[RMDB]
Background: Chemical mapping of a 177-nucleotide RNA with DMS and 2A3. Reactivities are rounded to 0.1 and cut off at 0 and 3. DMS adducts were read by reverse transcription with MarathonRT.
RNA sequence: GGGAACGACUCGAGUAGAGUCGAAAAAGCGAUCUCCUCAGAUGCAAGGCCAUGAAAUUAGCCACCUGCGUAUUUUUUUAUGCAAUUUAAAUGCCAGCGGCUAAGCUUUAAGACAACCAGUCUAACGGGACAAAUUAGAGUUCGCUCUAAUUUGUCCAAAAGAAACAACAACAACAAC
Reactivity to DMS in 0.01 (KOAc 150mM, MgCl2 10mM, bicine 150mM(pH8.5), 24C), signal-to-noise 2, nucleotides 027 to 126: a000g000c050g040a120u020c040u000c010c000u000c120a090g000a040u010g010c100a040a100g000g010c050c040a080u060g040a140a050a110u030u000a020g010c020c000a040c150c040u000g010c200g000u010a000u000u000u000u010u000u030u030a020u040g020c110a020a050u020u000u020a010a030a020u000g000c000c020a030g010c300g000g000c040u000a000a040g030c080u040u030u000a040a070g000a030c070a100a070c040c040a110g000u000c010u000a000a130c280g000
Reactivity to 2A3 in 0.01 (KOAc 150mM, MgCl2 10mM, bicine 150mM(pH8.5), 24C), signal-to-noise 4, nucleotides 027 to 126: a000g060c020g010a040u010c010u010c050c000u020c030a030g030a080u050g020c030a060a070g040g000c000c010a050u130g080a030a050a080u060u030a020g030c020c000a070c050c030u030g020c080g020u010a050u000u060u040u010u020u020u080a120u130g060c040a060a070u050u110u130a110a050a020u030g020c000c010a010g000c000g010g000c000u000a020a000g000c010u060u100u080a030a010g010a020c030a040a090c060c020a020g060u040c010u030a090a040c060g060